[RMDB]
RNA sequence: GGGAACGACUCGAGUAGAGUCGAAAAGAUAUGGAAGGGUGGACAGCGUUGAAGUAAUUCGGAAACGAAUUAUGGAGCUGCCACGCCUUCCUAAGUCAAAAGAUAGGAAAGUUCGCUUUCCUAUCAACACAUGAACGGACUUCGGUCCGUUCAUGUGAAAAGAAACAACAACAACAAC
Reactivity to DMS in 0.01 (KOAc 150mM, MgCl2 10mM, bicine 150mM(pH8.5), 24C), signal-to-noise 1, nucleotides 027 to 126: g000a070u010a300u010g000g000a040a010g000g040g110u000g010g010a260c190a010g010c000g000u020u020g010a190a260g000u000a020a030u000u000c000g000g020a160a120a110c000g030a000a010u000u000a000u010g000g000a040g030c000u020g010c000c000a010c000g020c000c000u020u000c000c000u000a040a130g000u000c020a140a100a090a150g000a000u000a000g000g010a040a000a010g030u010u000c300g000c010u000u000u000c000c000u000a010u000c030a120a090
This 177-nucleotide RNA was probed chemically with DMS. Source: RMDB library TTRDES, as collected in RNAgym. The RNA was probed in 150 mM KOAc, 10 mM MgCl2 and 150 mM bicine (pH 8.5) at 24 C. For DMS the reverse transcriptase was MarathonRT.